[RMDB]
The record gives the reactivity of an RNA of 177 nucleotides to 2A3 and DMS.
For DMS the reverse transcriptase was MarathonRT.
Conditions: 150 mM KOAc, 10 mM MgCl2 and 150 mM bicine (pH 8.5), 24 C.
Values cover nucleotides 27 to 126.
RNA sequence: GGGAACGACUCGAGUAGAGUCGAAAAAAUUCGAGAUUGUGGCUCAGCAGGUCACUCCGAAUGACCAUGCUAAUGCCAGAGCUUUUUCGCAUCUGGCUAGUAAACUGAUCGAACAUGAGAUCCCCACUGGACUUCUUAAGUUCGCUUAAGAAGUCCAAAAAGAAACAACAACAACAAC
Reactivity to 2A3 in 0.01 (KOAc 150mM, MgCl2 10mM, bicine 150mM(pH8.5), 24C), signal-to-noise 6, nucleotides 027 to 126: a000a010u060u030c030g000a040g020a080u150u110g030u030g020g020c050u020c150a050g020c010a010g050g020u030c020a010c070u080c040c030g080a090a060u010g020a010c000c020a060u040g000c000u050a110a040u140g000c000c000a000g000a000g010c010u160u130u070u110u140c100g000c040a240u010c000u000g000g000c000u000a000g010u010a000a100a050c030u020g030a040u040c030g030a030a030c020a100u130g030a020g000a080u020c020c030c000c000a020c050
Reactivity to DMS in 0.01 (KOAc 150mM, MgCl2 10mM, bicine 150mM(pH8.5), 24C), signal-to-noise 5, nucleotides 027 to 126: a090a080u000u000c000g000a100g000a160u020u010g010u000g000g010c090u010c190a070g000c170a110g000g000u000c000a030c020u020c130c110g030a090a060u000g000a060c020c010a170u000g010c020u010a020a130u030g000c000c000a000g000a020g000c010u000u020u020u040u030c180g000c030a110u010c000u000g000g000c010u000a030g020u010a050a160a100c070u010g000a120u010c050g000a060a070c110a090u010g020a120g000a060u000c020c000c010c120a130c190